Chemical mapping of a 207-nucleotide RNA with 2A3 and DMS. For 2A3 the reverse transcriptase was SuperScript II with manganese. The 2A3 profile rests on 1,027 reads. The reactions ran in a buffer of 150 mM KOAc, 10 mM MgCl2 and 150 mM bicine (pH 8.5), at 24 C. Values cover nucleotides 27 to 156. For DMS the reverse transcriptase was MarathonRT.

RNA sequence: GGGAACGACUCGAGUAGAGUCGAAAAUUAUGAAACUUUUGAACCUCGUAGUGACAUUGAGCGUGAUUUUCUCGCUAUGUCAGAGGAGAGUUUUGUAGAAAGGUAUGGUAAAGACUUAGGCCUACAACACAUACUGUAUGGUGAAGUUGAUAAGCCCUAUUUAAACUACCUUCGGGUAGUUUAAAUAAAAAGAAACAACAACAACAAC
Reactivity to 2A3 in 0.01 (KOAc 150mM, MgCl2 10mM, bicine 150mM(pH8.5), 24C), signal-to-noise 2, nucleotides 027 to 156: u080u010a050u040g020a000a000a000c000u060u060u160u280g120a110a170c010c000u050c030g100u090a170g210u030g090a000c000a010u060u200g150a050g010c030g050u040g130a160u070u130u190u090c050u020c020g000c000u000a000u000g000u000c030a020g010a010g000g010a020g000a010g000u000u020u000u040g020u000a020g140a050a100a030g060g000u100a040u110g010g050u120a110a050a010g020a010c030u060u070a040g070g050c000c020u020a020c010a090a030c080a020c010a020u150a160c050u070g050u090a080u120g040g020u030g050a050a040g000u050u050g040a050u050a230a000g020c000c000c000
Reactivity to DMS in 0.01 (KOAc 150mM, MgCl2 10mM, bicine 150mM(pH8.5), 24C), signal-to-noise 3, nucleotides 027 to 156: u000u010a040u000g000a020a000a030c010u010u000u010u010g040a120a230c030c000u000c030g040u010a190g010u020g000a010c000a060u000u030g020a050g000c040g060u000g010a230u000u000u000u010c010u000c000g020c000u000a060u000g010u010c020a230g020a060g030g000a130g000a060g000u000u000u000u000g030u010a070g000a070a070a150g000g030u000a010u000g010g020u000a100a130a110g000a030c030u010u000a100g070g020c020c000u010a080c050a080a070c070a060c040a080u000a070c020u000g020u000a090u000g030g000u000g020a040a220g020u000u010g000a080u000a060a180g000c010c010c050